Background:
Structure probing data (2A3 and DMS) for a 177-nucleotide construct. Conditions: 150 mM KOAc, 10 mM MgCl2 and 150 mM bicine (pH 8.5), 24 C. For 2A3, 64,914 sequencing reads were counted. The DMS profile rests on 38,942 reads.

[RMDB]
RNA sequence: GGGAACGACUCGAGUAGAGUCGAAAAGGUCUAUAGGAAUACUCAUACUCAUGCUCAUACUCAAUCGAAGACGAAUACGGAACAGAAACGAUCGACAAACGAAGCAGAACCUAUAGGGACUGCAAAAGUACGUAUGUAUGUUCGUAUACAUGUGUACAAAAGAAACAACAACAACAAC
Reactivity to 2A3 in 0.01 (KOAc 150mM, MgCl2 10mM, bicine 150mM(pH8.5), 24C), signal-to-noise 9, nucleotides 027 to 126: g070g020u040c040u060a100u120a090g040g070a090a060u070a120c020u020c060a030u040a080c020u030c030a040u070g010c000u010c020a030u040a090c010u020c050a020a090u040c050g070a050a020g060a030c030g040a040a010u080a080c040g040g060a080a030c040a070g090a050a120a020c040g030a040u060c020g040a020c050a030a110a010c070g050a060a000g000c000a000g010a090a120c000c000u080a090u080a200g050g000g030a030c010u010g000c010a030a050a010a030
Reactivity to DMS in 0.01 (KOAc 150mM, MgCl2 10mM, bicine 150mM(pH8.5), 24C), signal-to-noise 9, nucleotides 027 to 126: g000g000u010c020u010a070u020a070g010g010a090a060u020a060c060u000c030a060u010a060c060u000c060a080u010g010c030u000c030a050u000a070c100u000c040a050a070u010c040g010a070a060g010a080c050g000a080a050u010a080c090g000g010a060a050c080a070g000a060a070a060c080g020a030u010c030g010a040c120a050a060a080c120g010a090a080g000c010a020g000a040a190c020c010u010a080u040a090g010g000g010a220c010u000g000c050a040a020a060a090
It was measured as part of the RMDB library OK1LIB.